[RMDB]
RNA sequence: GGGAACGACUCGAGUAGAGUCGAAAAUGACUCAGAACCUGUGGCGAGGGUUCCUGUACUCCAACGUGGCCCUGUACCUGCCCGACAACCUCAAGUUCACUCCGCGUAACAUCAUUUUGCCCGAAAACCGCAACACCUACGCUUACAUCAACGGGCGGCUCUGUCAUAUUUUCGAAUAUGACAGAGCAAAAGAAACAACAACAACAAC
Reactivity to DMS in 0.01 (KOAc 150mM, MgCl2 10mM, bicine 150mM(pH8.5), 24C), signal-to-noise 1, nucleotides 027 to 156: u000g010a160c000u000c030a160g000a070a070c020c000u010g060u000g030g000c080g000a180g000g010g000u010u020c000c020u000g010u000a060c010u000c000c020a130a060c070g010u000g010g030c030c000c000u000g030u010a060c030c040u010g000c060c020c030g000a080c030a030a120c030c000u000c030a020a100g010u000u000c070a060c040u000c050c020g040c100g000u000a030a040c010a030u010c080a100u000u010u010u010g010c020c000c000g000a120a050a050a090c090c060g010c030a080a160c060a060c000c030u000a080c020g020c060u000u000a170c100a140u000c040a080a080c010g010g030g050c060g050
Reactivity to 2A3 in 0.01 (KOAc 150mM, MgCl2 10mM, bicine 150mM(pH8.5), 24C), signal-to-noise 4, nucleotides 027 to 156: u120g010a010c030u010c090a010g050a060a040c010c040u110g020u050g050g000c030g020a020g010g000g000u040u030c020c000u040g040u050a080c040u020c030c030a080a060c060g040u060g020g020c010c010c010u020g010u080a080c000c010u070g040c010c030c020g030a030c050a040a100c000c030u070c040a090a020g010u030u030c020a020c030u040c040c020g020c010g040u060a050a060c010a060u110c020a020u120u110u080u190g020c000c000c000g030a070a050a020a060c050c030g030c030a020a060c020a080c040c020u090a020c040g020c010u070u070a040c030a150u120c060a150a060c040g000g000g000c000g000
This 207-nucleotide RNA was probed chemically with DMS and 2A3. It was measured as part of the RMDB library OK3TST. The reactions ran in a buffer of 150 mM KOAc, 10 mM MgCl2 and 150 mM bicine (pH 8.5), at 24 C. For DMS the reverse transcriptase was MarathonRT. The 2A3 profile rests on 2,410 reads.